RNA sequence: GGGAACGACUCGAGUAGAGUCGAAAAGAUAUGGAAUACGCGACGAUCUGACGGCAUCGGAAACGAUGUUCAGGGAGCGUAGUUCCUAAGUCAAAGACAACCUCACACUUCGGUGUGAGGUUGUCAACAUUACAGUAAUCUUCGGAUUACUGUAAUGAAAAGAAACAACAACAACAAC
Reactivity to 2A3 in 0.01 (KOAc 150mM, MgCl2 10mM, bicine 150mM(pH8.5), 24C), signal-to-noise 5, nucleotides 027 to 126: g020a010u080a050u160g000g010a010a000u020a010c010g060c020g110a300c010g010a110u000c010u020g030a050c110g180g010c000a000u000c000g020g000a060a050a010c010g000a000u010g010u090u030c000a000g000g000g000a010g000c010g000u020a020g030u020u010c000c000u020a140a050g090u030c050a120a080a040g000a000c010a000a000c010c000u000c000a000c010a010c010u080u150c300g150g000u000g000u000g010a010g000g000u000u000g000u000c000a000a000
Reactivity to DMS in 0.01 (KOAc 150mM, MgCl2 10mM, bicine 150mM(pH8.5), 24C), signal-to-noise 9, nucleotides 027 to 126: g010a050u000a300u010g000g000a020a030u000a000c010g020c000g010a090c260g000a020u010c000u000g000a070c300g000g000c010a000u000c000g000g000a120a090a210c000g010a010u000g010u000u000c000a010g000g000g000a030g010c010g010u000a010g010u000u000c000c000u010a050a090g010u000c040a100a090a140g000a010c000a000a000c000c000u000c000a000c000a000c000u000u010c190g020g010u000g010u000g010a000g000g000u000u000g000u000c000a030a090